[RMDB]
An RNA of 177 nucleotides, treated with 2A3 and read out base by base.
RNA sequence: GGGAACGACUCGAGUAGAGUCGAAAAGUGAACCGGUUGUCGACCAACGGCAUGGCCGGGUAGCCGCGUCCGGCGCGGAUAACCGCUGAAGGCAUCUAAGCGGGAAGCCGUUCCCGAGAUCAGUUCUGGUCUACGUUCCUUUCGAGGAACGUAGACCAAAAGAAACAACAACAACAAC
Reactivity to 2A3 in 0.01 (KOAc 150mM, MgCl2 10mM, bicine 150mM(pH8.5), 24C), signal-to-noise 1, nucleotides 027 to 126: g160u120g000a060a000c000c000g050g010u040u000g000u000c000g010a110c050c050a140a100c030g000g020c000a060u020g160g000c010c000g000g000g010u000a000g000c000c000g000c010g040u000c000c050g030g070c030g000c010g000g000a000u040a090a040c000c010g000c000u000g040a090a020g070g050c040a170u080c050u020a000a010g000c000g040g000g000a020a040g000c000c010g020u000u020c020c040c010g020a010g000a100u260c170a040g110u130u000c010u050